[RMDB]
RNA sequence: GGGAACGACUCGAGUAGAGUCGAAAAGUAUGGAUGCCACCGUGACGGCUCAAUCACACAAGUGCCAACGAUAACGAGGCGCUCGCUAUUGCUGCGUAACUGACGGUCUGACGGUCUGACGUUACAAAAAACGAAAAGUGGUUCGCCACUUUUCGAAGAGCAUAUGUAAGUUCGCUUACAUAUGCUCAAAAGAAACAACAACAACAAC
Reactivity to DMS in 0.01 (KOAc 150mM, MgCl2 10mM, bicine 150mM(pH8.5), 24C), signal-to-noise 2, nucleotides 027 to 156: g010u010a030u010g030g020a070u010g000c020c010a080c020c080g040u000g030a130c090g010g040c020u000c050a130a100u000c090a020c040a050c100a070a070g060u010g010c000c020a060a100c070g020a110u010a060a070c050g000a180g010g020c060g040c050u000c020g030c010u010a020u000u010g020c000u000g000c010g010u000a060a050c070u000g010a280c130g000g000u000c020u010g010a130c100g040g010u010c000u000g020a200c070g040u020u000a110c050a000a110a030a000a060a160c000g000a010a000a010a020g010u010g030g010u000u000c300g010c020c020a020c010u000u000u010u000c000g000a020a110
Reactivity to 2A3 in 0.01 (KOAc 150mM, MgCl2 10mM, bicine 150mM(pH8.5), 24C), signal-to-noise 6, nucleotides 027 to 156: g110u080a060u170g030g050a050u090g040c030c020a020c020c020g030u040g050a070c080g030g010c010u030c060a060a110u120c030a030c020a030c010a140a030g020u020g040c000c020a070a050c080g050a080u070a140a060c050g010a040g080g010c040g020c040u040c030g010c020u070a080u180u260g040c060u040g010c030g030u030a070a040c030u050g050a030c030g010g000u010c030u080g050a020c050g000g010u030c040u040g030a030c040g010u030u050a040c040a000a110a010a010a010a010c010g000a000a000a000a000g000u000g020g000u030u050c100g050c030c000a000c000u000u000u000u000c000g000a030a010